[RMDB]
RNA sequence: GGGAACGACUCGAGUAGAGUCGAAAAUUCGGAGCACUGCAGUUCCCGAUAGAAAGGCUAAGCACCUCGCAGUGAGGUAAGGUGGGACUUUUCCUUCUGGAACCAAGCGGUUGGUUCCGAGGGGGGUACCUUUCUUCUACUUCGGUAGAAGAAAGGUAAAAGAAACAACAACAACAAC
Reactivity to DMS in 0.01 (KOAc 150mM, MgCl2 10mM, bicine 150mM(pH8.5), 24C), signal-to-noise 1, nucleotides 027 to 126: u000u000c020g020g000a060g010c030a060c020u000g030c030a120g010u000u000c010c000c130g010a060u010a060g010a050a030a020g010g000c050u010a100a200g010c080a040c020c000u000c030g020c060a170g000u000g000a070g020g000u000a070a020g020g020u010g010g000g000a060c030u040u000u020u010c010c020u000u000c000u010g020g000a030a000c000c030a110a130g020c110g000g000u000u010g030g010u000u000c020c000g010a010g000g000g000g000g000g030u000
Reactivity to 2A3 in 0.01 (KOAc 150mM, MgCl2 10mM, bicine 150mM(pH8.5), 24C), signal-to-noise 1, nucleotides 027 to 126: u040u000c030g020g010a030g000c010a000c020u010g000c010a040g000u000u000c000c050c020g000a010u010a080g040a000a030a000g050g000c090u180a130a000g110c000a040c030c000u020c000g160c130a200g080u080g260a030g110g000u050a060a030g080g040u060g050g040g110a240c000u090u040u040u010c010c000u000u070c040u080g000g000a000a000c030c010a150a000g080c030g060g030u050u100g020g050u000u000c000c000g000a020g020g010g020g000g000g000u000

Source: RMDB library VIROID, as collected in RNAgym. Structure probing data (DMS and 2A3) for a 177-nucleotide construct. As a SHAPE reagent, 2A3 marks flexible, mostly unpaired nucleotides at the ribose 2'-OH.